[RMDB]
RNA sequence: GGGAACGACUCGAGUAGAGUCGAAAAUACGCUCGCAUCCCGAUUUCAAAUUGCUACACAAUUUACAAGCAGACAUUUGCUACAAGUUCGUCCUUUGGGAUUAUGAACGUAGCAAUAUUUAUGGUACAACGGACGUACUUCGGUACGUCCAAAAGAAACAACAACAACAAC
Reactivity to 2A3 in 0.01 (KOAc 150mM, MgCl2 10mM, bicine 150mM(pH8.5), 24C), signal-to-noise 5, nucleotides 027 to 129: u090a010c010g030c040u010c010g050c010a030u020c020c010c010g040a040u040u070u100c030a020a040a030u030u030g000c020u130a040c110a030c060a060a090u050u080u160a080c060a110a090g010c010a000g020a060c070a120u010u000u010g000c020u000a000c000a080a200g000u000u000c000g000u000c040c000u050u120u250g170g010g020a000u020u030a120u210g000a000a000c000g000u010a000g000c000a000a000u010a010u010u090u010a020u100g060g000u040a030c000a070a000c040
Reactivity to DMS in 0.01 (KOAc 150mM, MgCl2 10mM, bicine 150mM(pH8.5), 24C), signal-to-noise 4, nucleotides 027 to 129: u070a040c130g010c000u000c090g100c140a180u020c040c000c020g040a060u000u100u020c140a080a080a080u060u000g010c060u060a120c140a020c040a090a040u010u020u050a080c060a090a040g030c060a050g010a040c130a080u000u000u000g030c010u020a020c040a020a100g030u000u000c050g000u020c000c050u000u050u060g000g000g000a030u040u000a020u070g040a030a040c000g040u050a030g050c000a000a020u000a020u080u040u050a110u030g010g040u000a040c180a050a120c210